[RMDB]
RNA sequence: GGGAACGACUCGAGUAGAGUCGAAAAGAUAUGGAGGUGAGAGGUCGAACUACGAUCUCGGAAACGAGCGUCGCGACUACCCACCUCACCUCCUAAGUCAAAAGGGGACAGCUUCGGCUGUCCCCAACCAAGAAGAAACGUUCGCGUUUCUUCUUGGAAAAGAAACAACAACAACAAC
Reactivity to DMS in 0.01 (KOAc 150mM, MgCl2 10mM, bicine 150mM(pH8.5), 24C), signal-to-noise 3, nucleotides 027 to 126: g010a020u030a300u010g000g000a010g000g000u010g020a010g010a130g000g000u000c010g000a090a050c110u000a150c020g010a060u000c000u000c000g010g000a120a100a210c010g000a010g000c190g000u000c250g010c040g020a050c050u010a110c040c020c120a300c100c000u000c000a020c000c010u010c000c000u010a020a040g010u000c030a030a050a090a090g000g020g010g010a000c000a000g000c030u000u010c210g020g010c000u000g010u010c000c000c000c000a000a010
Reactivity to 2A3 in 0.01 (KOAc 150mM, MgCl2 10mM, bicine 150mM(pH8.5), 24C), signal-to-noise 1, nucleotides 027 to 126: g010a020u100a070u210g010g000a000g040g020u010g000a010g010a000g030g000u060c010g040a130a020c060u040a020c170g110a170u070c020u020c030g000g040a020a020a000c000g010a020g070c080g020u010c030g040c010g050a000c030u100a080c020c120c050a080c010c000u000c000a000c000c000u000c020c000u030a100a000g060u030c020a000a000a150a230g000g040g000g000a000c010a000g010c000u080u180c300g150g000c000u010g000u000c000c000c000c000a010a020